Source: RMDB library OK1LIB, as collected in RNAgym. Chemical mapping of a 177-nucleotide RNA with 2A3. For 2A3 the reverse transcriptase was SuperScript II with manganese. For 2A3, 740 sequencing reads were counted.
[RMDB]
RNA sequence: GGGAACGACUCGAGUAGAGUCGAAAAGUACGUAGGAUGCGAGCCAAUCCUUGAAGGACCGUUGGCGUGCACCUUGGGGGCUGAGGUUAGCUGCCACAUGACCAGCAGGUCGCUGUCUGCGGGACUCGAGCCUCGGAUACUUCGGUAUCCGAGGCUCAAAAGAAACAACAACAACAAC
Reactivity to 2A3 in 0.01 (KOAc 150mM, MgCl2 10mM, bicine 150mM(pH8.5), 24C), signal-to-noise 2, nucleotides 027 to 126: g080u070a030c040g070u110a130g010g060a120u170g050c110g070a000g070c100c000a000a160u170c090c000u140u130g170a230a120g050g040a000c000c000g010u010u050g010g000c070g000u010g060c000a010c050c000u020u090g040g000g020g060g000c100u150g010a030g110g000u000u050a000g000c020u070g060c010c000a010c010a110u100g010a200c000c000a000g080c050a070g000g010u030c020g010c000u010g000u150c000u000g000c000g010g020g040a060c000u040c130
Reactivities are rounded to 0.1 and cut off at 0 and 3.